Chemical mapping of a 207-nucleotide RNA with DMS and 2A3. It was measured as part of the RMDB library M2RFPK. The RNA was probed in 150 mM KOAc, 10 mM MgCl2 and 150 mM bicine (pH 8.5) at 24 C.

RNA sequence: GGGAACGACUCGAGUAGAGUCGAAAAGUUAUGCUCUCGCUGCCUAAUGGCGGUGCGGGAAACCCACUCUAAAGUCCUUAGGGUUAGCGCCUUAAGGCGGGGUUCGGAGGCACCUGGCAACAGAAGCUGAAACUGUGCACAUUCGUGUGCACAGUAAUGCUCUUUAUACUUUCGAGUAUAAAGAGCAAAAAGAAACAACAACAACAAC
Reactivity to DMS in 0.01 (KOAc 150mM, MgCl2 10mM, bicine 150mM(pH8.5), 24C), signal-to-noise 1, nucleotides 027 to 156: g000u000u000a060u010g020c030u010c000u000c020g020c010u010g000c010c020u000a180a200u000g030g030c000g010g010u010g000c080g000g030g000a030a020a050c010c010c050a180c130u010c090u000a070a070a110g010u000c000c010u010u010a010g040g000g020u000u000a220g030c300g000c060c020u000u000a030a020g040g030c010g040g010g000g010u010u000c030g000g000a300g010g000c040a040c010c000u020g040g020c030a050a130c010a050g000a050a090g010c020u020g000a120a090a010c000u020g010u000g010c000a030c000a110u020u000c230g070u000g020u000g000c000a020c000a000g000u000a020a080
Reactivity to 2A3 in 0.01 (KOAc 150mM, MgCl2 10mM, bicine 150mM(pH8.5), 24C), signal-to-noise 3, nucleotides 027 to 156: g040u100u050a110u300g040c010u010c000u000c020g020c010u030g000c000c000u300a300a240u220g020g010c040g020g030u030g000c010g010g000g000a010a060a010c040c010c000a050c020u190c030u160a100a090a230g300u000c000c000u000u000a010g020g020g040u020u060a020g070c010g010c090c000u000u010a000a000g000g010c000g010g000g000g000u030u190c090g000g080a040g040g000c000a000c000c000u020g250g010c000a000a000c000a000g010a000a000g000c010u000g010a070a000a010c000u000g000u010g010c000a000c010a010u020u100c170g070u030g000u000g000c000a000c000a000g000u000a000a000